[RMDB]
RNA sequence: GGGAACGACUCGAGUAGAGUCGAAAACAUAUCGGGUUCGCCCGAUAUGAAAUGAAAUAGUACAAAUGGCAAAAGUACAAGGGAAACCCAAAAAGCCAAAAAAAAUCCAAGCGUUCGCGCUUGGAAACUACAUCGUUAUGUUCGCAUAACGAUGUAGAAAAGAAACAACAACAACAAC
Reactivity to DMS in 0.01 (KOAc 150mM, MgCl2 10mM, bicine 150mM(pH8.5), 24C), signal-to-noise 1, nucleotides 027 to 126: c000a000u000a000u000c000g000g000g010u000u010c220g010c000c000c010g000a000u000a000u000g000a050a100a020u000g010a050a090a090u000a120g000u000a000c030a050a050a010u000g030g000c030a050a070a140a030g000u000a000c000a110a110g000g000g010a060a060a140c010c000c010a030a070a170a080a170g010c030c020a000a030a000a070a070a030a070a300u010c000c020a000a010g000c000g010u000u010c300g040c000g040c000u020u000g000g000a010a000a040
An RNA of 177 nucleotides, treated with DMS and read out base by base. The reactions ran in a buffer of 150 mM KOAc, 10 mM MgCl2 and 150 mM bicine (pH 8.5), at 24 C. For DMS the reverse transcriptase was MarathonRT. The DMS profile rests on 706 reads. The data come from the RNA Mapping Database (RMDB), library M2PK50.